[RMDB]
RNA sequence: GGGAACGACUCGAGUAGAGUCGAAAAGCACAGCACUGGGGGCAGAAACAUGAAGGUGAAACCCUACACACACUGAGUCCUAACUAUGACAUUUCCAAACAGAGAACACUCUGAAAUGUUUGCAACUGUGGGUGUCUUUACAGCCAGCCUGGGUUCAAGAAAGAUCAAAAUUCGUUUUGAUCUUUCUAAAAGAAACAACAACAACAAC
Reactivity to 2A3 in 0.01 (KOAc 150mM, MgCl2 10mM, bicine 150mM(pH8.5), 24C), signal-to-noise 2, nucleotides 027 to 156: g010c000a010c020a040g030c020a000c140u080g010g000g030g020g000c040a050g090a050a060a000c020a100u130g050a030a020g010g000u020g040a030a000a030c010c010c010u070a010c030a010c000a000c000a010c010u040g030a020g040u010c010c010u070a080a060c060u070a120u150g030a010c010a040u000u080u040c050c040a150a210a070c020a090g040a000g000a100a050c060a040c100u030c040u030g010a030a060a080u100g020u050u060u110g030c080a110a050c030u040g000u060g030g030g000u030g030u020c010u020u040u070a050c000a010g020c010c000a000g010c000c010u120g000g060g000u070u080c040a020
Reactivity to DMS in 0.01 (KOAc 150mM, MgCl2 10mM, bicine 150mM(pH8.5), 24C), signal-to-noise 2, nucleotides 027 to 156: g000c060a080c070a090g030c060a080c060u010g000g020g000g000g000c040a070g010a140a090a100c010a090u020g030a050a080g020g020u000g000a130a060a100c050c000c010u010a080c080a050c090a080c050a050c020u000g000a130g040u010c040c030u000a070a100c100u000a130u000g000a080c030a060u000u010u060c000c040a070a060a150c050a090g000a230g030a040a130c040a050c020u020c040u000g000a050a060a060u000g030u010u010u000g030c000a050a020c020u000g030u000g000g040g030u010g000u000c040u000u000u010a050c020a050g000c010c010a100g000c020c040u010g030g000g020u000u000c070a080